[RMDB]
RNA sequence: GGGAACGACUCGAGUAGAGUCGAAAAGAAAGAAAGAAAGUGUGGUUUGUACUGUCUGGGAGCAGCCAAGGACAAGUUACCUCUUGUCUUCUAUCCUUGGCCUUCCUAGGUGUCCAAGCUCACAGAAGCCCUCCAUUUUCUUCGGAAAAUGGAGGGCAAAAGAAACAACAACAACAAC
Reactivity to 2A3 in 0.01 (KOAc 150mM, MgCl2 10mM, bicine 150mM(pH8.5), 24C), signal-to-noise 2, nucleotides 027 to 126: g070a000a000a010g060a020a090a000g050a030a170a060g040u050g000u130g000g030u050u000u000g000u000a030c040u070g070u130c010u010g030g000g030a040g010c190a020g000c010c000a000a000g000g010a000c000a020a000g000u000u230a240c000c030u180c070u080u110g000u030c000u070u030c020u110a090u070c000c000u000u000g030g000c010c000u130u120c000c000u000a000g010g020u020g000u010c010c000a000a000g010c000u030c030a000c000a000g020a030a000